This 207-nucleotide RNA was probed chemically with 2A3. Source: RMDB library PDB130, as collected in RNAgym. Reactivities are given for positions 27 through 156. The RNA was probed in 150 mM KOAc, 10 mM MgCl2 and 150 mM bicine (pH 8.5) at 24 C.
[RMDB]
RNA sequence: GGGAACGACUCGAGUAGAGUCGAAAACACGAAGGUGGUUUUCCCAGGGCGAGGCUUAUCCAUUGCACUCCGGAUGUGCUGACCCCUGCGAUUUCCCCAAAUGUGGGAAACUCGACUGCAUAAUUUGUGGUAGUGGGGGACUGCGUUCGCGCUUUCCACCUCAUACGCUGUUCGCAGCGUAUGAGGUAAAAGAAACAACAACAACAAC
Reactivity to 2A3 in 0.01 (KOAc 150mM, MgCl2 10mM, bicine 150mM(pH8.5), 24C), signal-to-noise 1, nucleotides 027 to 156: c040a000c000g000a000a000g100g020u020g000g000u020u010u030u050c010c000c000a010g000g000g000c000g030a020g000g010c010u050u080a000u040c000c020a120u070u300g120c130a110c100u140c210c070g000g000a000u000g010u050g040c010u020g000a020c020c010c000c000u000g020c010g000a010u000u040u000c020c000c000c000a160a230a140u300g030u300g000g000g000a010a010a010c030u010c020g000a020c010u010g020c000a070u040a150a270u300u250u280g180u170g100g030u020a000g010u040g000g000g040g000g000a000c020u010g040c030g180u000u010c020g000c010g010c040u000u040u000c000c000